[RMDB]
RNA sequence: GGGAACGACUCGAGUAGAGUCGAAAAAAAGAUAUGGAAGUUGUGGAGAGCGUAGUUUCUUGGACCGCUGCUCGGAAACGAGCAGCGCUAGAAAUGAAGCUCGAUGAAACAACUUCCUAAGUCAAAACUAACAGUAAUGGUUCGCCAUUACUGUUAGAAAAGAAACAACAACAACAAC
Reactivity to DMS in 0.01 (KOAc 150mM, MgCl2 10mM, bicine 150mM(pH8.5), 24C), signal-to-noise 4, nucleotides 027 to 126: a080a090a090g000a050u010a300u010g000g000a020a000g020u010u000g020u000g000g010a040g010a020g010c000g000u000a300g010u000u000u000c000u000u000g060g000a140c300c020g000c000u000g000c010u010c000g000g000a100a100a090c000g000a010g020c000a010g010c000g000c000u000a010g000a000a010a020u010g000a150a300g020c010u000c010g000a070u000g000a220a140a010c000a000a010c000u000u000c000c010u000a000a130g000u000c020a050a060a140a200
Reactivity to 2A3 in 0.01 (KOAc 150mM, MgCl2 10mM, bicine 150mM(pH8.5), 24C), signal-to-noise 1, nucleotides 027 to 126: a000a000a000g080a040u130a050u180g010g000a000a010g000u020u010g020u020g000g030a000g000a000g010c030g020u020a020g010u020u020u020c010u030u080g040g100a090c130c070g000c000u020g020c010u010c010g000g030a110a080a030c010g000a010g000c000a020g030c010g020c000u010a000g010a000a000a000u030g070a070a010g000c000u000c000g000a010u010g000a000a010a000c000a000a000c020u010u000c000c000u010a120a010g040u030c030a050a010a120a180